[RMDB]
RNA sequence: GGGAACGACUCGAGUAGAGUCGAAAAGAUCGAGUGAUCGAGUGUUCGAUCUCGAGAGUGAGAACUCGUACGUACGAGUUCGUACUCGUGAUCACGAACGAGUACGAGAGAACGAGAGUGAGAACACACGUGUGUUCGUGUUCUCUCACUCGAACACAGCCCCUAUGCGAUUCGUCGCAUAGGGGCUAAAAGAAACAACAACAACAAC
Reactivity to 2A3 in 0.01 (KOAc 150mM, MgCl2 10mM, bicine 150mM(pH8.5), 24C), signal-to-noise 2, nucleotides 027 to 156: g080a050u100c040g000a020g060u110g080a000u020c050g010a060g030u240g140u020u020c040g020a040u030c000u040c080g060a070g000a000g070u170g060a120g000a060a010c000u000c040g020u060a150c140g150u190a020c010g010a030g070u000u000c000g020u000a000c000u010c010g000u020g010a060u050c080a050c170g010a000a000c020g000a010g020u040a060c070g000a010g000a000g040a070a020c040g010a010g010a010g130u150g020a000g010a000a000c020a000c000a000c070g030u080g030u040g020u250u030c010g010u000g030u000u000c010u020c010u000c000a010c000u000c000g030a020a000c050a000c000